[RMDB]
This 207-nucleotide RNA was probed chemically with 2A3 and DMS. 2A3 adducts were read by reverse transcription with SuperScript II with manganese. High DMS reactivity at an A or C suggests that its Watson-Crick edge is free. Source: RMDB library ARCHII, as collected in RNAgym. 2A3 is a SHAPE reagent: it acylates the 2'-hydroxyl of flexible nucleotides of all four kinds.
RNA sequence: GGGAACGACUCGAGUAGAGUCGAAAACAAAACUCUAGUUGCCAACGACGACAACUACGCUCUGGCCGCUUAAGGCCUAAGCCUCGAAACCGCUUGUGUCCAUGCUCGCGGUGUAGAGUCACUAUCAUGGAAUCGCGCUGGGUGGCUGCCUGUCAGUGUUCCUGAUAUAGUUCGCUAUAUCAGGAACAAAAGAAACAACAACAACAAC
Reactivity to 2A3 in 0.01 (KOAc 150mM, MgCl2 10mM, bicine 150mM(pH8.5), 24C), signal-to-noise 5, nucleotides 027 to 156: c030a000a090a020a020c050u060c040u090a010g010u020u020g020c030c030a140a070c150g130a020c060g030a020c050a040a030c060u120a060c090g000c010u020c020u010g010g000c010c010g030c110u300u260a140a040g000g000c000c000u010a020a000g000c010c000u030c020g090a110a030a010c010c000g010c000u020u010g020u010g040u040c040c020a040u080g010c010u020c020g010c000g000g000u000g000u020a020g000a000g000u020c020a070c130u110a050u220c010a020u050g040g000a010a030u080c050g000c010g020c070u040g000g000g050u020g020g000c020u040g050c020c030u090g060u130c030a070g010u010
Reactivity to DMS in 0.01 (KOAc 150mM, MgCl2 10mM, bicine 150mM(pH8.5), 24C), signal-to-noise 1, nucleotides 027 to 156: c030a060a050a010a160c040u000c040u010a020g020u000u000g000c000c000a110a180c240g020a230c000g000a020c000a020a040c000u010a010c110g020c050u000c060u010g000g040c000c000g020c300u000u000a070a160g000g020c000c000u000a030a010g020c010c030u000c000g020a110a210a100c030c050g040c030u000u010g010u000g040u000c040c030a020u000g010c030u020c180g000c000g010g040u060g020u010a250g010a060g020u000c030a120c150u010a100u010c010a050u000g000g030a060a010u000c110g020c070g050c000u000g000g000g040u000g020g020c020u010g020c060c040u030g020u000c030a150g010u000